Record summary: The record gives the reactivity of an RNA of 177 nucleotides to DMS and 2A3. DMS adducts were read by reverse transcription with MarathonRT.

RNA sequence: GGGAACGACUCGAGUAGAGUCGAAAAGCUCGGAGACGAGCAAGGCUGACAAAACGCUGUCCCAACCUCCACGUGGUGUCGGCUGGAUAAUGCUGCAUUAUGUUGCAUUUAUCAACUGGGAAGGAAACAGUACUCAUACUUUCGAGUAUGAGUACUGAAAAGAAACAACAACAACAAC
Reactivity to DMS in 0.01 (KOAc 150mM, MgCl2 10mM, bicine 150mM(pH8.5), 24C), signal-to-noise 8, nucleotides 027 to 126: g000c010u000c000g010g000a240g000a220c010g020a020g030c020a110a050g010g010c010u000g000a030c060a040a040a070a050c040g000c110u010g000u010c010c010c010a080a130c100c030u010c060c040a220c050g010u000g000g010u010g000u010c020g000g010c020u010g020g010a020u000a020a010u000g000c000u000g010c020a150u030u030a080u030g020u000u000g000c000a020u010u020u020a010u000c010a100a090c140u010g010g000g000a060a070g010g000a120a070a200
Reactivity to 2A3 in 0.01 (KOAc 150mM, MgCl2 10mM, bicine 150mM(pH8.5), 24C), signal-to-noise 9, nucleotides 027 to 126: g000c000u000c000g010g020a110g020a060c020g000a000g000c010a010a060g030g000c010u010g010a030c040a030a130a040a020c080g020c080u060g070u030c000c000c000a020a060c010c010u040c030c030a110c070g060u100g010g020u020g010u030c000g010g000c020u040g040g000a010u010a040a010u020g010c010u030g000c020a080u110u140a130u300g020u020u020g000c000a000u040u070u100a040u030c020a010a050c050u060g010g010g050a060a040g020g030a050a060a010
The RNA was probed in 150 mM KOAc, 10 mM MgCl2 and 150 mM bicine (pH 8.5) at 24 C.
In probing experiments dimethyl sulfate is read out at A N1 and C N3, which are open when not base-paired.
For DMS, 29,895 sequencing reads were counted.